[RMDB]
RNA sequence: GGGAACGACUCGAGUAGAGUCGAAAAUACUCCACUGUCAGCGGCAUCAACCUUCCUGACAUGGUGAAGAUGGGCUGGCUUACUCAGGAGGAGCUUGAUGCUCUUGUGAAGAGAACAGCCGUGGGAGGUCCGCAUGAAAAUUCGUUUUCAUGCGGACAAAAGAAACAACAACAACAAC
Reactivity to 2A3 in 0.01 (KOAc 150mM, MgCl2 10mM, bicine 150mM(pH8.5), 24C), signal-to-noise 1, nucleotides 027 to 126: u070a030c020u000c040c010a030c100u020g040u000c080a030g030c030g030g000c050a100u050c050a140a080c000c030u080u060c030c010u020g000a050c000a070u080g030g010u060g100a080a000g010a030u140g020g050g060c060u030g020g000c000u000u030a050c010u030c020a030g030g090a010g020g010a030g000c000u090u100g100a070u270g000c040u000c000u050u030g140u030g110a180a180g020a000g010a080a020c010a010g000c020c030g010u060g010g050g020a020g140
Reactivity to DMS in 0.01 (KOAc 150mM, MgCl2 10mM, bicine 150mM(pH8.5), 24C), signal-to-noise 2, nucleotides 027 to 126: u000a190c050u010c030c000a060c120u000g010u010c010a020g050c290g020g000c080a120u000c200a140a140c000c010u000u010c200c000u000g010a010c050a090u010g010g000u000g000a060a070g000a090u000g010g010g020c010u000g000g020c050u000u010a150c090u000c010a110g010g010a060g000g000a030g010c080u000u010g000a120u010g000c020u000c010u010u010g020u000g010a100a120g000a030g010a070a060c070a040g000c050c040g080u020g000g000g010a110g010